[RMDB]
RNA sequence: GGGAACGACUCGAGUAGAGUCGAAAAGGUAGGGCAUUCGUGCCCUACCACACCUCUAAGCAGUUUGGCGAGGACGACGUCGCGGCCCACGUUUACCAACAACUACUCUCUCCUUCGGGAGAGAGAAAUAGGAUGGAAUAUUCGUAUUCCAUCCUAUAAAAGAAACAACAACAACAAC
Reactivity to 2A3 in 0.01 (KOAc 150mM, MgCl2 10mM, bicine 150mM(pH8.5), 24C), signal-to-noise 6, nucleotides 027 to 126: g000g000u020a010g010g000g010c010a010u030u080c190g080u040g000c000c000c000u000a000c000c000a000c000a000c000c000u020c030u040a060a060g040c040a060g040u090u180u200g110g000c030g030a050g010g050a030c050g010a020c050g040u040c020g010c040g070g040c010c010c000a030c030g000u020u060u060a220c040c020a040a050c010a030a010c030u130a080c000u030c000u010c000u000c000c020u030u060c200g060g000g000a000g000a000g000a000g000a010a000
Reactivity to DMS in 0.01 (KOAc 150mM, MgCl2 10mM, bicine 150mM(pH8.5), 24C), signal-to-noise 7, nucleotides 027 to 126: g010g010u000a010g010g010g020c000a040u000u010c210g010u000g010c000c000c000u000a000c000c000a030c150a060c040c010u000c080u000a090a180g010c060a090g000u000u010u000g010g010c030g010a130g010g000a080c080g000a070c080g000u000c030g010c050g000g000c020c010c040a240c050g010u000u000u010a120c050c040a070a060c120a040a050c100u000a200c000u000c000u000c000u000c000c000u000u010c170g020g000g000a010g000a000g000a010g000a010a060

Overview: Structure probing data (2A3 and DMS) for a 177-nucleotide construct. For DMS, 10,362 sequencing reads were counted. For 2A3, 12,189 sequencing reads were counted. DMS adducts were read by reverse transcription with MarathonRT. Values are in units of 0.01, from 0 to 300, in steps of 10.